RNA sequence: GGGAACGACUCGAGUAGAGUCGAAAAAUUCUAUCAGUUCACAGUUUAUUAUGUUUAGUUCCACUUCACGGAAGACUGUCGCGGAGUUCUGCGGAAGAAGAAAAAAUAAAAGAGGUAAUGUAGCCUCACUCUGUAGGAGUUUCGACUCCUACAGAGUAAAAGAAACAACAACAACAAC
Reactivity to 2A3 in 0.01 (KOAc 150mM, MgCl2 10mM, bicine 150mM(pH8.5), 24C), signal-to-noise 5, nucleotides 027 to 126: a000u080u020c030u050a130u130c050a070g080u140u080c040a030c000a040g020u030u080u110a190u150u070a080u090g170u060u130u080a100g030u040u050c020c000a060c020u090u100c070a020c130g090g040a060a030g040a050c030u040g030u120c040g000c060g050g020a140g050u140u050c030u060g010c010g060g050a050a020g020a060a000g140a030a230a040a030a000a020u190a020a080a010a010g010a000g010g020u050a130a060u240g060u170a040g000c010c000u000c000
Reactivity to DMS in 0.01 (KOAc 150mM, MgCl2 10mM, bicine 150mM(pH8.5), 24C), signal-to-noise 3, nucleotides 027 to 126: a080u020u020c020u000a100u060c080a080g020u020u010c100a070c050a060g000u000u000u000a060u030u010a060u020g000u020u000u010a080g000u010u000c050c030a150c060u010u010c060a040c080g000g000a050a080g000a040c040u010g010u010c040g020c030g000g010a110g030u010u000c030u030g000c040g000g000a050a060g000a070a060g020a030a000a070a030a040a090u020a060a040a120a120g000a020g030g010u000a030a110u020g010u020a100g010c000c000u010c010

Structure probing data (2A3 and DMS) for a 177-nucleotide construct. For DMS the reverse transcriptase was MarathonRT. The 2A3 profile rests on 3,084 reads.